RNA sequence: GGGAACGACUCGAGUAGAGUCGAAAAGAACUCACCAGCAAAUGUUUACGACAAGAUUCGACAUUUGCAAAUUACGUAGCGAUCUUCGAGAAUCUUGUCGAAACGUUCCCAAUCGCUACGCCCUAAAACACUGUAACUUGUUCGCAAGUUACAGUGUAAAAGAAACAACAACAACAAC
Reactivity to 2A3 in 0.01 (KOAc 150mM, MgCl2 10mM, bicine 150mM(pH8.5), 24C), signal-to-noise 3, nucleotides 027 to 126: g020a040a030c020u040c050a050c020c010a010g080c060a020a100a080u130g050u120u210u150a070c020g000a000c000a010a010g000a020u010u030c030g040a020c100a170u140u170u180g020c050a080a000a010u140u070a030c020g010u000a000g040c000g000a020u020c070u120u110c210g140a150g020a110a010u000c000u000u010g010u010c010g030a020a020a000c020g000u010u000c000c000c010a020a000u000c000g000c000u010a000c010g010c000c010c000u110a080a070a000
Reactivity to DMS in 0.01 (KOAc 150mM, MgCl2 10mM, bicine 150mM(pH8.5), 24C), signal-to-noise 2, nucleotides 027 to 126: g010a070a130c070u000c060a100c150c080a180g000c090a050a050a040u020g000u000u010u000a300c020g000a000c010a050a020g010a060u000u000c010g040a110c170a070u000u010u030g000c060a040a050a050u030u020a070c020g010u010a000g040c000g000a010u000c180u010u000c110g010a070g040a020a020u000c020u000u000g020u010c000g020a010a070a140c090g000u000u010c010c000c010a090a040u000c020g000c000u000a010c030g060c040c010c030u000a060a100a100

This 177-nucleotide RNA was probed chemically with 2A3 and DMS. For DMS the reverse transcriptase was MarathonRT. The 2A3 profile rests on 4,167 reads. The reactions ran in a buffer of 150 mM KOAc, 10 mM MgCl2 and 150 mM bicine (pH 8.5), at 24 C.